[RMDB]
RNA sequence: GGGAACGACUCGAGUAGAGUCGAAAACCCCAUCCGAAACGUACGGACUCAAUAGUGCGGCGUACGGAAACCAUCCCACGUACCCAUCCGAAACGUACGGUAAGUGCAUGCGAAAGGAUGGCAAUCAAUUCUCAGGAAUAGCAUGCGAAAGGAUGGGCUAUCAAAUAGCAUUCGUGCUAUUUGAUAGAAAAGAAACAACAACAACAAC
Reactivity to 2A3 in 0.01 (KOAc 150mM, MgCl2 10mM, bicine 150mM(pH8.5), 24C), signal-to-noise 3, nucleotides 027 to 156: c000c000c010c000a000u000c010c010g060a110a050a050c010g010u130a060c000g050g140a100c050u100c170a140a250u190a280g100u100g140c060g020g000c040g020u020a020c000g020g000a080a010a020c010c010a020u010c010c000c010a070c020g000u030a010c020c000c010a030u080c050c010g080a100a130a090c030g020u070a010c020g010g040u070a080a010g050u020g070c010a000u010g000c010g050a090a000a010g020g010a010u010g000g000c010a010a080u090c010a010a100u140u050c100u060c070a040g080g100a080a030u050a090g010c000a000u010g010c020g020a080a040a010g000g000a000u000g000g000g000
Reactivity to DMS in 0.01 (KOAc 150mM, MgCl2 10mM, bicine 150mM(pH8.5), 24C), signal-to-noise 3, nucleotides 027 to 156: c060c020c000c010a030u000c000c020g020a130a100a080c010g010u010a030c000g010g010a140c070u000c100a100a170u000a130g040u000g020c070g010g000c170g010u000a090c010g010g000a070a110a060c020c020a050u000c010c010c080a110c070g000u000a040c020c020c000a090u010c040c060g020a120a140a120c040g010u000a050c020g010g040u010a070a110g020u000g020c000a020u000g000c010g020a100a120a130g000g010a020u010g010g010c050a040a130u010c070a130a150u000u000c040u030c060a230g010g010a150a090u000a130g010c010a020u000g010c000g010a080a100a140g020g010a020u010g000g010g020
Structure probing data (2A3 and DMS) for a 207-nucleotide construct. For DMS, 6,381 sequencing reads were counted. Source: RMDB library OK3TST, as collected in RNAgym. For 2A3, 8,184 sequencing reads were counted. For DMS the reverse transcriptase was MarathonRT. The reactions ran in a buffer of 150 mM KOAc, 10 mM MgCl2 and 150 mM bicine (pH 8.5), at 24 C.